[RMDB]
RNA sequence: GGGAACGACUCGAGUAGAGUCGAAAAAUCGUACGAUCGUACGAUCUAUGAGGUACCGCUCUAGGUACGUACUCACUAGGUACGCGACUCGAUAGCGAUCACGAUCUGACUGACCAUGAGCCAUGCCCUAUCCGCGGGGAUUCGUCCCCGCGGAUAGAAAAGAAACAACAACAACAAC
Reactivity to DMS in 0.01 (KOAc 150mM, MgCl2 10mM, bicine 150mM(pH8.5), 24C), signal-to-noise 1, nucleotides 027 to 126: a050u000c010g050u090a090c120g000a070u010c130g010u030a050c070g000a030u010c060u000a060u060g000a100g010g010u000a040c050c040g000c150u010c260u020a080g000g000u000a040c010g030u030a270c010u000c030a090c280u110a060g010g000u000a010c060g010c120g030a070c060u000c030g000a120u020a070g020c030g020a060u000c030a050c100g030a100u020c120u020g010a110c100u000g000a060c120c060a000u000g010a120g000c030c010a040u000g010c090c060
Reactivity to 2A3 in 0.01 (KOAc 150mM, MgCl2 10mM, bicine 150mM(pH8.5), 24C), signal-to-noise 1, nucleotides 027 to 126: a000u090c010g000u060a000c060g030a120u070c110g040u050a020c100g000a010u000c000u010a060u090g000a040g040g030u040a010c000c000g140c090u120c150u110a060g000g010u010a010c030g050u040a060c040u040c070a130c110u000a050g100g030u050a030c080g070c020g090a060c030u020c030g110a130u010a040g030c060g000a030u000c020a010c040g050a010u000c030u080g040a050c050u100g080a020c010c020a070u110g040a000g030c020c020a000u100g050c040c000